[RMDB]
RNA sequence: GGGAACGACUCGAGUAGAGUCGAAAAACGCUUUAGCAGCUUAAAAAACUGAAUAAAGCCCUUCCUUCUUAUCCUCCUUCUCUUAGGAUGAGAAAACAGGAAGGUCAGAAAAAGAGAAAAACGUGGAUAUCAAGCUUGACGAUAACACGAAGUAGUUUGAAAUAAUCCUGUUCGCAGGAUUAUUUCAAAAAGAAACAACAACAACAAC
Reactivity to 2A3 in 0.01 (KOAc 150mM, MgCl2 10mM, bicine 150mM(pH8.5), 24C), signal-to-noise 1, nucleotides 027 to 156: a000c050g000c000u000u000u000a010g000c000a010g000c000u030u050a080a060a060a080a000a000c040u070g000a220a180u020a000a000a000g000c010c000c000u030u010c000c000u000u030c000u000u020a000u000c000c030u010c000c040u090u040c050u010c030u020u010a000g000g000a000u000g000a000g020a010a070a000a080c090a010g000g000a000a000g030g010u030c040a000g110a010a130a020a000a000g010a000g000a030a060a000a050a000c020g000u000g030g020a160u010a010u150c030a130a000g070c100u150u180g030a010c020g000a000u010a040a000c000a000c040g020a080a020g020u220a020g010u010u030